Annotation
The record gives the reactivity of an RNA of 170 nucleotides to 2A3 and DMS. 2A3 is a SHAPE reagent: it acylates the 2'-hydroxyl of flexible nucleotides of all four kinds. DMS adducts were read by reverse transcription with MarathonRT.

RNA sequence: GGGAACGACUCGAGUAGAGUCGAAAAUCCGUCCAACCCCUUCCCCCGAGGGUCGCCCAGGAAUGGCGGGACCCACUCGACUGGGGUCCGCGUUCCAUCCUUUCUUACCUUGUGGCCGGCAUGGUCCUAACAAUUCUCUUCGGAGAAUUGAAAAGAAACAACAACAACAAC
Reactivity to 2A3 in 0.01 (KOAc 150mM, MgCl2 10mM, bicine 150mM(pH8.5), 24C), signal-to-noise 9, nucleotides 027 to 129: u000c000c000g030u050c030c040a070a070c010c000c000c000u030u030c010c000c000c000c010g020a060g010g000g010u020c030g010c010c010c020a020g040g060a050a040u050g300g090c030g010g000g020a020c000c020c000a060c020u210c090g190a180c120u080g000g000g000g020u010c000c000g040c000g010u030u000c000c000a050u050c020c020u080u130u060c030u070u080a120c030c000u050u060g050u140g040g000c000c000g000g040c030a050u130g020g010u020c000c010u030a050a020
Reactivity to DMS in 0.01 (KOAc 150mM, MgCl2 10mM, bicine 150mM(pH8.5), 24C), signal-to-noise 9, nucleotides 027 to 129: u020c000c030g000u040c040c090a070a190c040c010c000c020u010u010c000c010c010c020c010g000a040g000g040g040u000c050g000c030c030c050a090g000g000a000a000u040g080g060c020g010g030g020a050c050c000c010a010c070u030c180g010a150c100u030g010g010g020g030u030c010c010g000c030g040u000u000c000c000a060u060c070c070u020u030u030c000u020u000a130c080c050u010u010g030u060g040g030c050c020g030g040c100a070u020g010g030u010c000c000u020a040a130